[RMDB]
RNA sequence: GGGAACGACUCGAGUAGAGUCGAAAAGAUAUGGACUGGUCACCUUGAACUUUGAUCUCGGAAACGAGGGAGUUUGGGUGAGCCAGUCCUAAGUCAAAAGGAGUCUGACGUUCGCGUCAGACUCCAAGUGUAAAAUCUAGUUCGCUAGAUUUUACACAAAAGAAACAACAACAACAAC
Reactivity to DMS in 0.01 (KOAc 150mM, MgCl2 10mM, bicine 150mM(pH8.5), 24C), signal-to-noise 5, nucleotides 027 to 126: g010a050u000a300u000g000g010a010c000u000g000g010u000c000a020c000c010u000u000g020a010a010c000u000u010u020g010a090u010c000u000c000g020g000a140a070a230c000g010a010g000g000g000a000g010u000u000u000g010g000g010u010g000a080g010c000c000a010g000u000c010c000u010a010a060g010u010c030a080a090a140a160g000g000a030g000u000c000u000g000a010c010g010u000u010c250g030c010g010u000c000a000g010a000c000u000c000c010a000a020
Reactivity to 2A3 in 0.01 (KOAc 150mM, MgCl2 10mM, bicine 150mM(pH8.5), 24C), signal-to-noise 2, nucleotides 027 to 126: g010a000u100a030u150g000g010a000c010u010g000g000u030c000a010c020c020u170u300g050a010a010c020u200u170u150g100a110u130c000u010c010g000g030a080a070a060c000g000a010g000g020g010a030g000u000u030u040g020g000g000u020g030a020g000c000c000a000g000u020c020c000u000a000a000g030u020c000a000a000a020a170g000g000a020g010u000c000u000g000a010c040g060u090u100c300g030c000g160u000c000a000g000a010c000u000c000c020a020a000